[RMDB]
RNA sequence: GGGAACGACUCGAGUAGAGUCGAAAAAUGCUAAUACCGCAUAAUAACUUUAAACAUAAGUUUUAAGUUUGAAAGAUGCAAUUGCAUCACUCAAAGAUGAUCCCGCGUUGUAUUAGCUAGUUGGUGAGGUAAAGGCUCACCAAGGCGAUGAUACAUACCACUUUAAUUGGUUCGCCAAUUAAAGUGGAAAAGAAACAACAACAACAAC
Reactivity to 2A3 in 0.01 (KOAc 150mM, MgCl2 10mM, bicine 150mM(pH8.5), 24C), signal-to-noise 4, nucleotides 027 to 156: a000u040g000c020u020a070a060u040a240c060c070g000c020a010u050a100a060u080a040a110c020u040u030u120a020a020a040c070a150u280a300a150g000u020u000u000u030a010a020g010u030u050u050g130a150a140a050g050a020u010g000c010a090a280u190u300g010c000a010u000c000a020c050u080c030a080a090a030g100a050u140g010a040u040c010c000c000g020c040g040u030u060g000u000a030u030u020a030g000c000u010a080g020u030u010g000g000u000g010a000g000g010u020a030a040a010g020g010c000u000c000a010c000c000a000a000g010g010c010g010a070u120g020a010u040a060c000a010u050a050
Reactivity to DMS in 0.01 (KOAc 150mM, MgCl2 10mM, bicine 150mM(pH8.5), 24C), signal-to-noise 2, nucleotides 027 to 156: a100u010g010c030u010a090a050u000a080c090c100g020c030a040u000a100a170u010a010a020c020u000u000u000a040a030a020c010a130u010a120a180g010u000u010u000u010a010a030g000u010u000u010g000a100a140a180g010a070u010g010c010a200a090u000u000g000c000a030u010c010a090c130u000c070a110a090a160g000a070u010g000a090u000c030c040c000g020c050g010u000u000g020u000a020u000u000a080g020c000u000a090g030u000u000g000g010u000g000a020g010g000u000a120a090a240g020g000c000u000c000a020c000c000a010a060g020g000c020g000a140u010g020a130u000a040c030a090u000a200